[RMDB]
RNA sequence: GGGAACGACUCGAGUAGAGUCGAAAAGGUGAGCUAAUUAUGGACGAAGAUAGCCAAAUUCCAACGUGUUUCGAUAUACUGAAGAGUAAUGGUUAUAAUCUCAAAGGGUAUUCGCAGGAUACGAUAACUAAUGCCCUAGUUUCGACUAGGGCAUUAGAAAAGAAACAACAACAACAAC
Reactivity to DMS in 0.01 (KOAc 150mM, MgCl2 10mM, bicine 150mM(pH8.5), 24C), signal-to-noise 5, nucleotides 027 to 126: g010g040u010g020a090g010c060u000a070a090u010u010a100u000g010g010a080c100g010a060a070g010a080u000a060g000c010c030a030a120a090u010u000c020c040a060a220c210g020u000g010u010u000u010c130g010a090u010a040u000a030c010u010g000a160a110g000a030g000u000a040a070u000g010g010u000u010a050u000a110a060u010c030u000c030a060a120a110g000g010g000u000a050u000u000c040g020c170a080g010g010a070u000a040c070g000a090u010a040a140
Reactivity to 2A3 in 0.01 (KOAc 150mM, MgCl2 10mM, bicine 150mM(pH8.5), 24C), signal-to-noise 2, nucleotides 027 to 126: g090g020u040g030a020g020c030u040a050a080u200u150a130u280g050g000a010c090g030a050a070g040a090u050a010g040c020c010a030a030a010u100u000c000c010a040a040c040g040u020g040u020u100u120c040g010a010u040a000u000a190c010u030g050a080a010g010a040g010u110a090a040u070g010g050u080u100a080u060a200a090u080c060u010c050a090a070a030g120g010g000u020a040u030u020c050g060c170a040g030g030a030u100a030c000g040a020u110a100a060

Chemical mapping of a 177-nucleotide RNA with DMS and 2A3. The data come from the RNA Mapping Database (RMDB), library OK2TST. Conditions: 150 mM KOAc, 10 mM MgCl2 and 150 mM bicine (pH 8.5), 24 C. Reactivities are given for positions 27 through 126.